[RMDB]
RNA sequence: GGGAACGACUCGAGUAGAGUCGAAAAUUGCAUGAUGAGCAAUCCAUUAUUAGUUAUCCCUGUCAGAAAUAUACUGUUGAUAACAUACAACUCUGAUUUAAAACAAGCUCUAGUUCGCUAGAGCUUGCUAUGUAAGCGAGUUCGCUCGCUUACAUAGAAAAGAAACAACAACAACAAC
Reactivity to DMS in 0.01 (KOAc 150mM, MgCl2 10mM, bicine 150mM(pH8.5), 24C), signal-to-noise 3, nucleotides 027 to 126: u000u000g010c060a090u020g010a080u010g000a210g010c060a050a050u010c070c060a100u000u020a110u010u010a120g000u000u000a120u010c010c050c010u000g030u000c020a030g010a040a100a090u020a090u010a060c180u000g000u010u000g010a170u010a060a090c080a050u010a070c130a070a080c140u000c010u010g000a050u000u010u020a050a060a050a220c010a000a010g000c000u000c000u000a000g000u000u000c280g030c000u000a000g000a010g000c000u010u000g020
Reactivity to 2A3 in 0.01 (KOAc 150mM, MgCl2 10mM, bicine 150mM(pH8.5), 24C), signal-to-noise 4, nucleotides 027 to 126: u020u040g000c010a010u130g030a120u090g050a150g030c010a030a050u030c020c040a040u110u160a090u120u090a140g100u040u090a070u070c000c000c010u020g040u030c010a010g080a080a130a030u200a020u010a100c090u050g050u080u030g110a150u100a170a060c020a050u180a060c030a050a030c060u000c060u070g050a090u050u100u300a020a100a010a050c000a010a000g010c000u000c000u000a010g030u040u040c200g000c080u000a000g000a000g020c000u000u000g000
Structure probing data (DMS and 2A3) for a 177-nucleotide construct. DMS adducts were read by reverse transcription with MarathonRT. The RNA was probed in 150 mM KOAc, 10 mM MgCl2 and 150 mM bicine (pH 8.5) at 24 C. For DMS, 2,154 sequencing reads were counted. For 2A3 the reverse transcriptase was SuperScript II with manganese.